[RMDB]
RNA sequence: GGGAACGACUCGAGUAGAGUCGAAAAUCGAGGGAGUUUACGGACAUCGUGUGCAAGCUGUACUGAAUGUCAUCUGCCAGGGCAGGAACUUGUUCACUGUCAAAAUAUCAGGCCCCUGGAAGGUGGCCAGGCUCCCCGCUCCGAGUCGGAGCUGGUACCCCAGGAUUAAUUUCGAUUAAUCCUGGGGAAAAGAAACAACAACAACAAC
Reactivity to DMS in 0.01 (KOAc 150mM, MgCl2 10mM, bicine 150mM(pH8.5), 24C), signal-to-noise 1, nucleotides 027 to 156: u000c070g000a140g000g020g010a050g000u010u000u000a100c110g030g000a130c050a040u020c160g040u000g000u010g050c020a010a150g010c000u010g000u000a230c030u010g020a090a100u000g000u000c060a100u000c060u000g000c130c040a150g010g040g060c020a070g000g010a030a130c090u010u000g040u010u000c030a060c040u000g010u000c030a070a020a120a100u000a100u000c040a180g010g010c090c000c000c000u000g000g010a030a150g000g030u020g000g000c010c030a070g020g000c000u000c010c010c000c040g020c000u000c050c040g000a180g040u000c040g030g000a040g010c030u030g000g010u020a170
Reactivity to 2A3 in 0.01 (KOAc 150mM, MgCl2 10mM, bicine 150mM(pH8.5), 24C), signal-to-noise 2, nucleotides 027 to 156: u080c030g000a150g000g030g000a030g020u040u040u180a080c060g060g030a010c020a030u120c100g020u010g000u000g070c030a030a050g050c030u050g050u070a060c010u020g050a140a090u130g040u130c080a130u080c080u120g020c040c010a030g000g010g000c010a010g070g000a090a070c030u030u060g000u070u050c010a020c030u000g010u010c030a020a050a090a080u160a050u120c050a010g040g000c000c010c000c000u070g120g090a090a020g040g030u090g010g050c000c000a000g010g000c010u000c000c020c010c010g000c010u000c030c010g050a070g050u120c110g030g000a010g030c090u060g040g000u090a020